Source information:
The record gives the reactivity of an RNA of 177 nucleotides to DMS. Values cover nucleotides 27 to 126.
[RMDB]
RNA sequence: GGGAACGACUCGAGUAGAGUCGAAAAAAAGAUAUGGAUACUGCCGAGCCAGCGGUUGCCGAUGAAACAGCUCGGAAACGAGCUGUGGAGGCAACCCUGGCGUUUGACGCAGUAUCCUAAGUCAAAACACGUAACAAACGUUCGCGUUUGUUACGUGAAAAGAAACAACAACAACAAC
Reactivity to DMS in 0.01 (KOAc 150mM, MgCl2 10mM, bicine 150mM(pH8.5), 24C), signal-to-noise 1, nucleotides 027 to 126: a060a110a130g020a080u000a300u010g000g000a010u000a000c000u000g000c020c000g010a070g020c000c000a020g000c180g040g020u000u000g020c000c010g000a080u000g010a170a190a000c010a000g040c000u010c000g020g020a040a080a150c000g030a050g000c000u000g000u000g000g000a050g000g000c010a000a010c000c000c000u000g020g000c020g000u020u020u000g020a190c300g000c000a010g000u000a000u000c000c000u030a000a100g030u000c030a140a090a070a180